This 177-nucleotide RNA was probed chemically with DMS and 2A3.

RNA sequence: GGGAACGACUCGAGUAGAGUCGAAAACUGAGCCACGGGAGCAGGAGGCUCAUUUGGUCACCCACAAGGUGGGAUAUUUACUGUCACCAGAGACCAUCCCCACUCACCUUUGCUGGCAUUGGAAAUGCCACAUCAGAGAUUUCGAUCUCUGAUGUGGAAAAGAAACAACAACAACAAC
Reactivity to DMS in 0.01 (KOAc 150mM, MgCl2 10mM, bicine 150mM(pH8.5), 24C), signal-to-noise 9, nucleotides 027 to 126: c110u000g010a040g010c020c020a100c120g010g010g010a080g020c100a080g010g010a130g010g000c030u000c030a050u000u010u000g010g010u010c080a160c040c020c020a080c140a100a110g000g030u000g010g000g010a060u010a040u000u010u010a100c140u000g010u000c070a080c110c050a070g010a120g000a050c050c040a080u000c030c000c010c080a120c060u000c040a060c030c030u000u010u010g020c070u000g010g010c040a060u000u000g020g010a080a100a080u010g000
Reactivity to 2A3 in 0.01 (KOAc 150mM, MgCl2 10mM, bicine 150mM(pH8.5), 24C), signal-to-noise 9, nucleotides 027 to 126: c030u020g010a010g020c010c010a040c050g040g030g040a090g030c050a050g030g090a060g060g000c010u010c040a020u070u040u050g020g000u030c010a040c040c080c000a020c050a060a080g160g010u030g010g030g010a030u040a140u150u200u130a130c060u070g090u140c030a030c050c020a030g020a010g010a080c020c010a050u050c000c000c000c000a030c010u030c010a150c010c000u070u090u120g030c050u040g030g000c020a060u030u110g060g030a070a100a040u110g020

2A3 adducts were read by reverse transcription with SuperScript II with manganese. Source: RMDB library OK2TST, as collected in RNAgym. The reactions ran in a buffer of 150 mM KOAc, 10 mM MgCl2 and 150 mM bicine (pH 8.5), at 24 C.